Structure probing data (DMS and 2A3) for a 177-nucleotide construct. It was measured as part of the RMDB library OK2TRN. For 2A3 the reverse transcriptase was SuperScript II with manganese. The RNA was probed in 150 mM KOAc, 10 mM MgCl2 and 150 mM bicine (pH 8.5) at 24 C. For DMS, 3,244 sequencing reads were counted. For 2A3, 3,608 sequencing reads were counted.

[RMDB]
RNA sequence: GGGAACGACUCGAGUAGAGUCGAAAAGGCGAGAAGCAGGCCAUUAUCGCCGGCAUGGCGGCCGACGCGCUGGGCUGGCGUUCGCGACGCGAGGCUGGAUGGCCUUCCCCAUUAUGAUUCUUCUCGCGUGACAGCAGGUAUUCGUACCUGCUGUCACAAAAGAAACAACAACAACAAC
Reactivity to DMS in 0.01 (KOAc 150mM, MgCl2 10mM, bicine 150mM(pH8.5), 24C), signal-to-noise 3, nucleotides 027 to 126: g020g010c000g000a020g010a020a020g030c300a050g000g000c000c000a040u010u000a080u000c070g010c020c000g020g030c020a050u000g000g020c040g020g030c030c070g010a060c130g000c010g020c020u020g010g000g000c060u000g010g020c030g000u000u000c050g000c090g010a140c140g010c010g000a100g000g000c090u030g010g000a020u010g010g020c000c020u000u000c010c000c000c140a100u010u030a120u020g000a150u020u000c030u000u000c000u000c000g010c050
Reactivity to 2A3 in 0.01 (KOAc 150mM, MgCl2 10mM, bicine 150mM(pH8.5), 24C), signal-to-noise 3, nucleotides 027 to 126: g140g010c000g000a010g010a030a000g030c060a030g000g000c000c000a020u070u060a130u190c050g010c010c020g000g000c040a050u090g090g000c000g020g070c060c050g070a040c080g020c000g010c030u110g000g140g040c100u080g040g020c010g030u030u020c030g010c080g100a170c060g040c020g030a060g110g000c080u080g120g000a020u010g010g000c000c000u030u060c020c000c020c000a030u150u250a170u190g110a080u110u000c000u000u010c000u030c020g000c020